[RMDB]
RNA sequence: GGGAACGACUCGAGUAGAGUCGAAAAGCGUACUACGCUCCUCACAGAGGAGGGUGGUUAAACAGCUCCCAAAUAGGAGCUGGAACCACCACCUACCCACCCUCUGUAGGGAGCGUAUCGCAAAACUACGGCUAUAACUUCGGUUAUAGCCGUAGAACCACUAUCAUUCGUUCGCGAAUGAUAGUGGAAAAGAAACAACAACAACAAC
Reactivity to 2A3 in 0.01 (KOAc 150mM, MgCl2 10mM, bicine 150mM(pH8.5), 24C), signal-to-noise 2, nucleotides 027 to 156: g030c010g040u110a060c090u010a000c040g000c000u000c000c000u050c000a000c020a000g000a010g000g000a000g000g000g000u000g010g030u020u020a050a040a000c010a000g010c010u070c000c030c030a160a300a040u300a050g020g010a020g000c000u020g000g030a030a000c040c000a000c000c020a020c000c010u080a090c010c030c050a060c010c000c000u010c000u000g020u010a010g010g010g000a010g010c010g000u000a010u090c000g000c010a000a050a060a000c010u010a010c000g000g030c000u010a000u000a000a000c000u050u090c280g040g000u000u000a000u010a010g000c000c000g000u000a000g000a000a000